Source information:
The data come from the RNA Mapping Database (RMDB), library OK3TST. An RNA of 207 nucleotides, treated with DMS and 2A3 and read out base by base. The DMS profile rests on 2,489 reads. For DMS the reverse transcriptase was MarathonRT.

[RMDB]
RNA sequence: GGGAACGACUCGAGUAGAGUCGAAAAUGAGCUACUGUUAUGCGAAGUUUGAAGGAGGAAAGUGUUCAUCACCCAAAUCCAGAAAUCACUCCAAGCAGGAAUGCUGCUGUGCCUUGAAGGGAGAAGGCUGGGGAGACCCCUGCGAGCUCUGCCCCACAUUUAGAGAAAACUUCGGUUUUCUCUAAAUAAAAGAAACAACAACAACAAC
Reactivity to DMS in 0.01 (KOAc 150mM, MgCl2 10mM, bicine 150mM(pH8.5), 24C), signal-to-noise 2, nucleotides 027 to 156: u000g020a100g050c020u010a050c040u000g020u010u000a120u000g070c100g010a060a300g030u000u010u020g020a300a150g010g010a080g020g010a110a130a070g010u000g010u000u010c120a150u010c030a060c020c010c010a010a190a220u010c000c010a130g000a230a060a040u000c000a060c010u000c050c000a000a080g000c010a080g010g010a080a120u000g020c020u010g000c000u000g020u010g030c000c020u000u000g010a110a080g000g030g020a070g020a110a050g010g020c050u000g010g000g040g010a180g020a150c040c010c010c040u000g020c020g010a070g000c040u000c040u010g010c040c000c000c000a060c300
Reactivity to 2A3 in 0.01 (KOAc 150mM, MgCl2 10mM, bicine 150mM(pH8.5), 24C), signal-to-noise 4, nucleotides 027 to 156: u080g010a010g000c020u040a020c020u080g050u150u110a190u180g030c060g070a100a040g020u060u100u140g060a070a040g000g020a020g000g040a200a040a050g030u020g050u150u280c160a220u240c010a060c010c040c010a030a020a010u020c020c000a030g060a040a060a010u040c020a040c050u010c010c010a010a010g010c000a010g040g080a180a080u190g020c010u000g040c050u070g020u100g070c020c000u040u050g100a130a050g050g040g030a070g040a040a030g040g020c050u090g000g030g000g020a110g040a030c000c000c000c030u070g020c030g000a010g000c000u020c020u040g060c000c000c000c000a030c010